An RNA of 177 nucleotides, treated with DMS and 2A3 and read out base by base. The RNA was probed in 150 mM KOAc, 10 mM MgCl2 and 150 mM bicine (pH 8.5) at 24 C. It was measured as part of the RMDB library OK2TST. DMS adducts were read by reverse transcription with MarathonRT. For DMS, 6,504 sequencing reads were counted.
[RMDB]
RNA sequence: GGGAACGACUCGAGUAGAGUCGAAAAAUGCAUACUUGCUGGAUCAUGUCAUGCAAAUUAUAGAUUGGGGGGAUGAUUUGCUUUACAAGAAGAGAAACAGGGCAUUUGAUCUGAUAGGUAAGUUUGACCCAUUUACAACUUUCGAGUUGUAAAUGGGAAAAGAAACAACAACAACAAC
Reactivity to DMS in 0.01 (KOAc 150mM, MgCl2 10mM, bicine 150mM(pH8.5), 24C), signal-to-noise 5, nucleotides 027 to 126: a080u000g010c040a060u010a090c030u000u000g000c060u000g010g010a060u000c020a030u000g000u000c050a070u000g000c020a010a020a040u000u000a040u010a080g000a180u010u010g010g010g000g000g000g010a070u000g000a020u000u000u000g000c010u000u000u000a110c250a080a120g020a080a110g010a130g000a080a070a080c150a070g010g010g000c010a010u000u010u010g020a030u000c020u000g010a090u000a050g020g020u010a030a040g020u000u000u000g010a230
Reactivity to 2A3 in 0.01 (KOAc 150mM, MgCl2 10mM, bicine 150mM(pH8.5), 24C), signal-to-noise 3, nucleotides 027 to 126: a000u120g010c010a000u030a040c000u010u010g040c050u140g030g030a030u040c000a010u040g020u040c020a020u080g000c000a030a020a030u070u060a050u050a090g300a300u300u300g060g000g000g020g000g000a000u000g000a000u050u010u000g000c000u110u060u030a040c030a090a030g090a070a020g030a010g070a030a110a020c060a080g000g030g000c000a010u020u080u090g000a010u000c010u010g040a080u090a060g040g050u030a040a080g010u030u030u070g040a060